[RMDB]
RNA sequence: GGGAACGACUCGAGUAGAGUCGAAAAUGUUGGGGAUUAAACCCUGAUUGAGUUCAGCCCACAUACUUUGUUGAUUGGUUGUCAAUCAUGGCAAAAGUGCACGCUACUUUGAUAACCUUUUACAUGCCUCAUAGUUAGACUUCGGUCUAACUAUGAGAAAAGAAACAACAACAACAAC
Reactivity to 2A3 in 0.01 (KOAc 150mM, MgCl2 10mM, bicine 150mM(pH8.5), 24C), signal-to-noise 2, nucleotides 027 to 126: u070g020u040u040g010g000g000g010a010u110u080a100a190a150c000c000c000u000g030a040u070u090g060a090g260u100u100c020a030g030c040c130c020a050c010a010u260a060c050u160u190u140g080u070u120g090a080u010u020g060g000u000u020g000u040c000a020a030u050c040a090u150g020g000c000a050a140a000a110g200u160g070c130a070c180g020c000u020a020c040u040u000u080g000a010u010a020a010c000c040u030u060u000u000a060c040a050u050g120c000
Reactivity to DMS in 0.01 (KOAc 150mM, MgCl2 10mM, bicine 150mM(pH8.5), 24C), signal-to-noise 3, nucleotides 027 to 126: u000g000u000u000g000g010g000g000a090u010u020a120a160a230c020c050c000u000g010a010u000u000g010a140g030u000u010c110a110g000c010c000c000a120c170a090u000a100c210u000u000u000g010u000u000g020a010u010u000g000g010u000u000g000u000c000a020a010u020c100a170u020g000g000c010a060a080a090a100g020u000g050c170a100c120g030c030u000a020c110u000u000u010g000a030u020a000a030c000c000u000u000u000u000a030c050a030u000g020c280